[RMDB]
RNA sequence: GGGAACGACUCGAGUAGAGUCGAAAACGUCUGAUCGAACGCCGAUCAUCAGCUUCUCCAAACAUUUACGCAACUGGGCUGAUAUGCGUACGCGAAGGAGAAACGAUCAGGGACGCUGUAGACUUCGGCGCGCGCGUGUGCUGUUGCGUGCAGGAACCACAUCGGUAACUUUCGAGUUACCGAUGUGAAAAGAAACAACAACAACAAC
Reactivity to 2A3 in 0.01 (KOAc 150mM, MgCl2 10mM, bicine 150mM(pH8.5), 24C), signal-to-noise 4, nucleotides 027 to 156: c040g040u000c060u050g020a050u040c020g040a160a060c150g020c080c000g020a020u040c040a050u030c020a010g030c020u060u020c040u000c020c030a070a160a060c050a100u090u170u210a020c020g020c020a050a040c050u090g010g120g040c050u060g040a040u050a030u150g000c020g000u020a050c060g020c010g020a090a040g040g020a040g010a050a060a000c000g030a040u160c030a020g040g010g040a030c050g040c100u030g020u110a050g010a150c020u010u000c010g070g000c010g000c000g000c000g000c000g030u050g040u070g050c040u010g040u030u060g000c010g010u020g010c020a010g040g060a020a010c050
Reactivity to DMS in 0.01 (KOAc 150mM, MgCl2 10mM, bicine 150mM(pH8.5), 24C), signal-to-noise 1, nucleotides 027 to 156: c070g040u000c040u000g000a060u000c000g010a200a100c040g050c030c020g020a100u010c010a070u000c000a010g010c000u000u000c000u010c040c040a140a110a040c050a190u000u000u010a060c030g000c010a050a150c070u000g030g000g000c010u000g010a130u000a070u000g040c000g060u000a020c170g070c010g020a100a120g010g010a080g000a100a060a100c010g000a070u030c130a120g020g030g020a090c040g000c010u030g000u010a120g020a120c020u000u000c000g030g030c010g030c010g000c030g020c040g030u000g020u010g050c010u000g000u000u010g000c000g000u000g020c020a150g000g010a110a080c090
Notes:
Source: RMDB library OK3TST, as collected in RNAgym. Structure probing data (2A3 and DMS) for a 207-nucleotide construct. For 2A3 the reverse transcriptase was SuperScript II with manganese.